[RMDB]
RNA sequence: GGGAACGACUCGAGUAGAGUCGAAAACGCCGGUCAAAUCGUCAACAUCAUCGAGUUCUAUCACCACGAUCUGGACUGGGCAAUCAAUAACUUUGGCAUCAAGCUGAAGGCUAUCUCCAAGGGCCUGCCUUUAAACCAUGUUCGCAUGGUUUAAAGGAAAAGAAACAACAACAACAAC
Reactivity to DMS in 0.01 (KOAc 150mM, MgCl2 10mM, bicine 150mM(pH8.5), 24C), signal-to-noise 6, nucleotides 027 to 126: c180g010c020c020g000g000u000c050a070a100a060u000c040g010u000c090a060a070c110a060u010c080a070u000c090g000a100g020u010u000c040u010a120u010c090a100c100c080a070c050g000a040u000c070u000g020g010a030c050u000g010g020g000c050a090a090u010c120a070a050u000a030a080c040u000u000u000g010g010c020a110u010c170a080a150g010c050u000g000a040a020g010g010c050u010a060u000c060u000c030c040a060a100g010g010g010c070c030u000g020
Reactivity to 2A3 in 0.01 (KOAc 150mM, MgCl2 10mM, bicine 150mM(pH8.5), 24C), signal-to-noise 6, nucleotides 027 to 126: c030g010c010c010g010g040u050c030a040a020a070u040c010g050u030c030a040a060c010a140u140c010a060u090c070g050a030g090u120u010c070u080a130u090c030a030c130c000a020c030g010a030u000c040u150g050g040a030c010u060g050g060g000c010a010a050u100c030a010a080u080a090a060c020u060u050u050g010g000c020a070u040c080a240a070g010c020u030g030a020a000g030g000c010u060a060u070c040u020c040c020a040a060g050g010g020c020c020u030g020